[RMDB]
The data come from the RNA Mapping Database (RMDB), libraries RFM100 and RFMREP.
Structure probing data (2A3 and DMS) for a 177-nucleotide construct.
RNA sequence: GGGAACGACUCGAGUAGAGUCGAAAAGCCUCACAAGAAGCCCAAGGAUAUCUGCCUGCUCUGACUCCCACUCUGAGAUGGCUGCCCUCCCUUUUCCUUGGCCAUGCCUUCCUGCUGCAGGGCUCUGAUAUACUAACAAGUUCGCUUGUUAGUAUAUAAAAGAAACAACAACAACAAC
Reactivity to 2A3 in 0.01 (KOAc 150mM, MgCl2 10mM, bicine 150mM(pH8.5), 24C), signal-to-noise 9, nucleotides 027 to 126: g030c000c000u070c010a080c030a040a060g110a070a020g030c000c010c010a030a030g070g000a040u040a060u120c030u060g030c010c010u030g020c010u010c010u030g030a050c020u020c020c010c010a040c010u040c030u050g080a090g030a110u070g060g000c030u040g030c010c000c000u040c000c010c000u030u040u030u040c010c000u030u040g020g000c010c010a040u060g010c010c010u030u050c010c010u040g030c020u020g000c020a040g010g020g000c010u000c000u010g020
Reactivity to DMS in 0.01 (KOAc 150mM, MgCl2 10mM, bicine 150mM(pH8.5), 24C), signal-to-noise 9, nucleotides 027 to 126: g010c030c010u010c080a090c120a090a080g000a080a090g010c050c010c020a090a100g000g010a080u010a040u010c060u000g010c030c030u010g010c030u000c030u010g000a100c070u000c020c020c020a090c110u010c040u010g010a110g010a090u010g000g010c030u010g000c030c010c020u000c020c020c030u000u000u010u000c020c020u000u010g010g010c050c050a060u010g000c040c020u000u010c030c020u010g010c050u000g010c060a090g000g000g010c030u000c050u000g010